[RMDB]
RNA sequence: GGGAACGACUCGAGUAGAGUCGAAAAACACAGAGAUUAUGGAGCAAACACUGAUCCAGUUGACAGUUGGGAAGGAAAUUUCCCAAACAGAUCAUUUCUGGCAUCCUUGGAAAGAUUUCCGAGUAGUUCUACAUGAUGGGAAGACCCUGCGUCAACAAUGCACUGGAUGAUUCGUCAUCCAGUGCAUAAAAGAAACAACAACAACAAC
Reactivity to 2A3 in 0.01 (KOAc 150mM, MgCl2 10mM, bicine 150mM(pH8.5), 24C), signal-to-noise 1, nucleotides 027 to 156: a000c160a000c050a000g130a000g030a100u080u120a040u280g110g020a050g000c110a090a110a040c070a070c140u110g010a060u000c020c020a050g010u010u010g010a010c040a060g040u010u020g020g020g000a030a030g030g110a010a010a260u020u010u000c000c030c010a030a000a000c020a000g010a010u090c040a040u020u210u060c010u020g010g010c010a070u030c010c000u000u020g000g070a020a100a090g280a160u120u090u000c050c000g000a000g010u030a000g000u050u050c020u050a060c040a110u180g060a070u070g020g000g010a020a030g080a110c010c010c010u060g060c040g080u060c000a010a010c010a040
An RNA of 207 nucleotides, treated with 2A3 and read out base by base. Values cover nucleotides 27 to 156. For 2A3 the reverse transcriptase was SuperScript II with manganese. Conditions: 150 mM KOAc, 10 mM MgCl2 and 150 mM bicine (pH 8.5), 24 C. Source: RMDB library OK3TST, as collected in RNAgym.